[RMDB]
This 177-nucleotide RNA was probed chemically with DMS and 2A3. The RNA was probed in 150 mM KOAc, 10 mM MgCl2 and 150 mM bicine (pH 8.5) at 24 C. The 2A3 profile rests on 5,583 reads. Values cover nucleotides 27 to 126. 2A3 adducts were read by reverse transcription with SuperScript II with manganese.

RNA sequence: GGGAACGACUCGAGUAGAGUCGAAAACGCUAAACACCAGUCGCAGACGCUAAAACUAACGCUACGUCAAGACGGAUGUGACAACGCGCAAGCUAGCGCUGGCAAAAGCGAUACGUACGAGCAGCGAAAAUAUAUAAUUAUUCGUAAUUAUAUAUUUAAAAGAAACAACAACAACAAC
Reactivity to DMS in 0.01 (KOAc 150mM, MgCl2 10mM, bicine 150mM(pH8.5), 24C), signal-to-noise 4, nucleotides 027 to 126: c050g010c030u000a060a120a130c250a160c020c030a130g020u040c040g040c010a100g030a130c120g000c040u010a020a080a080a070c090u020a060a160c030g010c030u000a090c220g000u000c030a050a080g000a150c130g000g000a110u050g010u000g010a010c050a090a300c180g020c010g000c060a050a060g020c020u000a120g000c000g000c020u000g000g020c060a040a050a130a080g000c020g010a110u020a070c060g000u020a070c070g010a050g020c060a060g010c020g020a090
Reactivity to 2A3 in 0.01 (KOAc 150mM, MgCl2 10mM, bicine 150mM(pH8.5), 24C), signal-to-noise 7, nucleotides 027 to 126: c020g000c030u050a100a080a020c030a040c020c010a020g090u220c040g000c040a030g030a120c070g030c070u090a080a060a070a100c070u130a100a020c030g020c050u100a020c050g040u020c020a030a030g110a070c060g080g020a120u170g070u050g080a010c020a050a030c060g010c000g020c060a060a020g030c010u040a010g000c010g000c000u000g010g000c020a050a050a050a020g020c010g030a030u040a090c020g030u030a020c030g040a040g050c030a010g030c020g060a070